[RMDB]
RNA sequence: GGGAACGACUCGAGUAGAGUCGAAAAGAUAUGGAGACCCGAUGGACGCAUGGCGAGUCGGAAACGACGAGCCAUGAACUACGUCUAAGGGUCUCCUAAGUCAAAGUACUAGGUUCGCCUAGUACAACCAUUUGUGCUUGUUCGCAAGCACAAAUGGAAAAGAAACAACAACAACAAC
Reactivity to DMS in 0.01 (KOAc 150mM, MgCl2 10mM, bicine 150mM(pH8.5), 24C), signal-to-noise 1, nucleotides 027 to 126: g030a030u000a300u020g000g010a000g010a010c030c010c000g000a200u060g010g000a000c000g030c000a010u000g010g000c000g000a200g010u000c010g000g010a120a140a270c000g030a000c000g000a300g050c000c000a000u000g000a020a180c110u000a110c070g000u000c000u000a180a300g000g000g000u000c020u000c000c000u000a000a050g020u000c030a070a030a160g000u000a000c000u000a000g000g020u000u020c180g000c000c000u000a000g000u000a000c000a020a080